Description
The record gives the reactivity of an RNA of 207 nucleotides to 2A3 and DMS. For 2A3 the reverse transcriptase was SuperScript II with manganese. The 2A3 profile rests on 6,809 reads. Values cover nucleotides 27 to 156. The DMS profile rests on 4,779 reads. The RNA was probed in 150 mM KOAc, 10 mM MgCl2 and 150 mM bicine (pH 8.5) at 24 C.
RNA sequence: GGGAACGACUCGAGUAGAGUCGAAAACGCUGGGAAAUGUGGCUUUUGACGGGAACUACUGAAGCGCGCACGGUAGCUCCCGAUAAGCGUAACAUCAUUUCCUGUGCUGAAGCGCGCACGGCAACCGAAAGGUGCGAUCUCAGUCUUCGGACUGAAAUGUGUAUGACUAGUUCGCUAGUCAUACACAAAAAGAAACAACAACAACAAC
Reactivity to 2A3 in 0.01 (KOAc 150mM, MgCl2 10mM, bicine 150mM(pH8.5), 24C), signal-to-noise 6, nucleotides 027 to 156: c050g010c000u010g010g000g020a010a020a000u010g020u040g080g000c030u060u080u070u120g230a140c020g000g020g010a010a010c000u000a000c000u040g030a230a040g020c010g000c000g000c000a020c030g010g000u010a000g000c030u020c010c000c000g000a000u020a020a010g010c020g050u150a060a110c030a160u150c000a000u000u000u010c000c000u020g100u060g030c030u110g000a100a020g000c010g000c010g000c010a010c020g120g000c030a140a160c030c000g030a100a060a020g020g000u020g010c020g010a110u050c020u000c120a000g010u000c010u040u130c240g090g000a000c000u010g010a020a030a050
Reactivity to DMS in 0.01 (KOAc 150mM, MgCl2 10mM, bicine 150mM(pH8.5), 24C), signal-to-noise 2, nucleotides 027 to 156: c080g030c010u000g010g000g020a000a020a070u000g020u010g020g020c000u000u030u000u000g010a150c040g030g020g000a010a010c000u010a000c020u010g020a030a060g070c000g020c030g000c020a290c010g000g000u000a020g000c010u020c000c000c040g040a040u010a030a100g040c050g010u030a130a200c200a120u000c010a060u000u000u000c000c000u010g030u020g040c010u010g000a120a090g000c030g000c020g030c000a100c070g010g000c070a120a070c030c030g020a110a190a280g000g040u000g020c050g000a110u000c050u010c010a020g020u000c000u000u020c300g050g000a030c010u000g000a020a050a110